[RMDB]
RNA sequence: GGGAACGACUCGAGUAGAGUCGAAAAGAAAGAAAGAAAGCUGACCCUUCUGCUGACGGAUCUUGUGGAGCACCACAGUGCAGAAGGGGAGAGAAGCUUUAAUGCUGACCGUCUGGGCAGCCUUGAAAAAACGGAUUCUUCUUCGGAAGAAUCCGAACUAUGAUCACUUGUUCGCAAGUGAUCAUAGAAAAGAAACAACAACAACAAC
Reactivity to 2A3 in 0.01 (KOAc 150mM, MgCl2 10mM, bicine 150mM(pH8.5), 24C), signal-to-noise 4, nucleotides 027 to 156: g050a020a040a010g070a050a080a000g050a030a040a000g010c020u050g080a070c000c020c000u010u000c000u000g020c020u070g070a070c080g080g060a100u100c070u150u070g000u020g020g050a120g130c110a080c080c000a010c010a040g050u030g030c000a000g000a000a000g000g000g010g010a010g000a000g010a020a010g000c000u040u020u020a080a040u100g000c000u000g010a190c010c010g130u230c150u150g010g020g000c010a000g000c000c030u070u090g060a110a040a010a010a010a020c010g000g000a000u000u000c000u000u000c000u010u070c170g090g000a000a000g000a000a000u010c000c000g000a000a000
Reactivity to DMS in 0.01 (KOAc 150mM, MgCl2 10mM, bicine 150mM(pH8.5), 24C), signal-to-noise 3, nucleotides 027 to 156: g000a150a070a130g010a150a080a070g000a060a030a020g040c010u000g000a070c000c000c010u000u000c010u000g000c030u010g030a180c090g030g000a050u000c030u000u000g040u000g010g000a190g030c170a110c010c000a030c010a100g000u000g010c020a030g000a030a020g010g010g010g000a040g000a130g020a110a030g030c010u000u000u000a030a100u000g000c000u000g000a020c000c010g020u010c220u010g040g000g000c010a030g020c010c050u020u000g010a000a030a040a090a150a190c010g020g000a010u000u000c000u000u000c010u010u010c300g030g000a030a020g000a020a000u000c000c000g000a010a050

An RNA of 207 nucleotides, treated with 2A3 and DMS and read out base by base. The RNA was probed in 150 mM KOAc, 10 mM MgCl2 and 150 mM bicine (pH 8.5) at 24 C. The DMS profile rests on 8,555 reads. It was measured as part of the RMDB library M2RFPK. DMS adducts were read by reverse transcription with MarathonRT.